[RMDB]
RNA sequence: GGGAACGACUCGAGUAGAGUCGAAAAACGGACCUUACGAGGUCCGAAUGAGUGAUAGUCCUGAAUUUAUUUGCGAGCUGGACAAUGAAAAGAUCUAGCACCAUGUAAAUUCAGCAUUUGAGCUCAAGAGCCUAUGUUCAUUCGUGAACAUAGGCUCAAAAGAAACAACAACAACAAC
Reactivity to 2A3 in 0.01 (KOAc 150mM, MgCl2 10mM, bicine 150mM(pH8.5), 24C), signal-to-noise 5, nucleotides 027 to 126: a000c000g000g010a000c010c000u040u020a060c280g070a020g010g000u000c000c000g000a030a120u050g000a000g010u070g020a040u010a040g010u050c020c000u000g000a010a000u000u010u000a030u000u010u020g140c160g050a080g010c010u010g000g020a000c030a050a140u280g130a130a060a030a050g060a150u000c000u010a000g000c030a060c030c010a010u010g000u010a000a000a000u000u000c000a000g000c000a000u000u010u040g030a000g000c000u000c010a010a030
Reactivity to DMS in 0.01 (KOAc 150mM, MgCl2 10mM, bicine 150mM(pH8.5), 24C), signal-to-noise 1, nucleotides 027 to 126: a110c010g000g000a040c000c010u020u000a120c220g000a000g030g010u000c000c010g010a030a000u000g070a050g050u000g000a230u000a010g060u000c190c000u000g000a060a020u000u000u000a000u000u010u010g020c080g010a050g030c030u000g030g000a000c040a080a140u010g000a050a090a110a180g040a110u020c000u000a000g000c000a160c130c030a000u000g000u000a000a000a000u000u000c000a000g000c290a000u000u000u000g000a300g000c040u000c000a000a140
Source information: Chemical mapping of a 177-nucleotide RNA with 2A3 and DMS. It was measured as part of the RMDB libraries RFM100 and RFMREP. For 2A3 the reverse transcriptase was SuperScript II with manganese. For DMS, 1,825 sequencing reads were counted.